[RMDB]
RNA sequence: GGGAACGACUCGAGUAGAGUCGAAAAGUGGUAGCGGUGUGGCUGAGUAUCUGCGCCUCGCAUUUUGUUUUUCGUCGCCGUCAUCUGCAACAAGGUAAGGCAUUGAGUGAAUUACAUUAUCGCGCGCGUCAAGUUGUCCGUUCGCGGACAACUUGACAAAAGAAACAACAACAACAAC
Reactivity to DMS in 0.01 (KOAc 150mM, MgCl2 10mM, bicine 150mM(pH8.5), 24C), signal-to-noise 1, nucleotides 027 to 126: g020u000g000g030u020a030g010c120g020g010u010g010u010g000g050c000u040g020a070g010u000a090u000c050u000g020c040g020c030c030u000c090g050c100a110u050u000u010u030g020u000u000u000u020u000c040g000u010c050g010c030c020g010u000c150a020u000c040u010g000c030a090a150c130a090a070g020g000u000a080a180g010g010c050a070u000u020g000a070g020u020g020a090a060u010u000a060c040a030u020u020a060u000c090g030c090g040c230g020c040